[RMDB]
RNA sequence: GGGAACGACUCGAGUAGAGUCGAAAAGCAAAUACCGGGCUCAACAAAUAAUAAGUGCAAACAACAUUGUACCUUUUGCUCGUAAGCAAGUAGCUGUAGCUUAAUUGCCGAAACGCCUCUUAUAGGUUCGAGCGUCUGUGAUUUGACUCCGUUAAGGCUUAAUGAUUACCUUCGGGUAAUCAUUAAGAAAAGAAACAACAACAACAAC
Reactivity to DMS in 0.01 (KOAc 150mM, MgCl2 10mM, bicine 150mM(pH8.5), 24C), signal-to-noise 4, nucleotides 027 to 156: g020c010a050a080a090u000a060c020c030g030g010g020c020u000c030a060a080c030a050a060a090u010a100a110u000a050a030g010u000g010c020a050a060a090c040a100a160c090a220u000u000g020u000a020c020c030u000u000u000u010g010c020u010c060g020u000a090a070g020c040a040a040g010u000a050g020c040u000g030u000a080g010c010u000u000a050a090u000u000g010c010c000g010a060a070a080c100g010c010c010u000c060u000u000a060u010a080g020g020u000u000c030g020a080g010c020g020u000c040u000g020u000g010a230u000u000u000g010a100c020u000c010c040g020u000u000a060a100g000g010
Reactivity to 2A3 in 0.01 (KOAc 150mM, MgCl2 10mM, bicine 150mM(pH8.5), 24C), signal-to-noise 9, nucleotides 027 to 156: g010c000a020a030a010u060a090c020c020g000g020g000c000u040c040a040a050c030a070a180a070u190a080a050u140a180a040g020u020g030c020a020a050a070c070a090a050c030a160u050u050g010u050a030c020c020u040u100u080u140g000c010u030c030g040u050a030a010g000c010a020a040g040u040a010g040c060u090g090u250a020g020c000u080u080a120a070u230u070g000c010c010g030a040a040a040c070g010c030c000u070c030u100u130a110u100a230g060g000u030u040c060g000a000g010c010g030u020c020u040g170u090g070a060u010u020u070g040a090c020u000c030c010g040u090u100a080a010g070g000
Background
This 207-nucleotide RNA was probed chemically with DMS and 2A3. For DMS, 10,386 sequencing reads were counted. It was measured as part of the RMDB library RSTRND. The RNA was probed in 150 mM KOAc, 10 mM MgCl2 and 150 mM bicine (pH 8.5) at 24 C.